[RMDB]
RNA sequence: GGGAACGACUCGAGUAGAGUCGAAAAUGUUCAUGAAGCGUUAUGACGCGCGGUGGCUGGUGACCAGGAUGACGACCAUCACCUCGCUGGAUUUGACGCCGCAGGUGUAGCGGGACCGAGCCCGCCGGUAUAUCCACGUGUUCGCACGUGGAUAUACAAAAGAAACAACAACAACAAC
Reactivity to DMS in 0.01 (KOAc 150mM, MgCl2 10mM, bicine 150mM(pH8.5), 24C), signal-to-noise 5, nucleotides 027 to 126: u040g020u030u000c080a110u000g020a130a100g000c010g000u000u010a030u000g020a240c150g010c010g030c110g000g020u000g000g020c190u000g000g000u000g010a190c090c100a170g000g010a110u020g020a100c120g000a100c040c020a080u010c020a020c000c010u010c040g030c000u000g000g000a160u000u010u040g010a020c060g000c000c200g010c080a090g010g010u000g010u020a080g010c010g000g010g000a110c040c050g010a080g020c000c000c010g000c010c030g010
Reactivity to 2A3 in 0.01 (KOAc 150mM, MgCl2 10mM, bicine 150mM(pH8.5), 24C), signal-to-noise 5, nucleotides 027 to 126: u160g030u060u090c060a060u110g090a110a020g010c020g000u020u060a090u190g020a050c010g000c000g000c020g010g000u020g010g020c130u020g000g010u050g090a140c030c030a100g120g020a200u250g090a050c080g040a030c020c000a010u010c000a000c010c000u000c020g000c040u130g010g110a110u090u060u160g030a020c060g000c000c000g000c020a030g000g060u080g050u100a020g010c010g000g010g000a050c060c050g030a050g110c000c010c010g010c010c000g000
About this RNA: An RNA of 177 nucleotides, treated with DMS and 2A3 and read out base by base. For 2A3, 5,009 sequencing reads were counted. Source: RMDB library OK1LIB, as collected in RNAgym. Reactivities are given for positions 27 through 126. The reactions ran in a buffer of 150 mM KOAc, 10 mM MgCl2 and 150 mM bicine (pH 8.5), at 24 C.